[RMDB]
RNA sequence: GGGAACGACUCGAGUAGAGUCGAAAAGGCCACUCAUGGUUGACCCUCAGCUACAAGGCAUCAAAUGGAUCAAGAAUAAAUAUGGUGAAGAUCUCCGGGUCACGCAGAUUGGUCAGAAAGGGUAAGUGGUUGAGCACAGAAGUUCCCACUUUAGCCACAUACCUGGUGCUUUCGAGCACCAGGUAUGAAAAGAAACAACAACAACAAC
Reactivity to 2A3 in 0.01 (KOAc 150mM, MgCl2 10mM, bicine 150mM(pH8.5), 24C), signal-to-noise 1, nucleotides 027 to 156: g040g020c000c000a020c000u020c010a240u160g040g050u050u110g000a020c010c030c000u070c120a070g000c000u070a160c040a160a230g080g030c080a130u130c000a060a110a120u170g000g000a000u000c040a100a030g040a180a090u240a300a010a010u200a140u190g050g000u260g060a100a060g030a090u050c100u050c110c050g000g000g000u020c000a000c000g050c000a000g000a000u010u030g000g000u040c000a000g190a060a200a000g010g000g000u020a020a040g000u060g060g050u270u300g090a000g000c050a040c010a180g050a160a000g000u040u000c040c090c000a000c000u050u000u040a000g060c000c000a020
Chemical mapping of a 207-nucleotide RNA with 2A3. It was measured as part of the RMDB library OK3TST.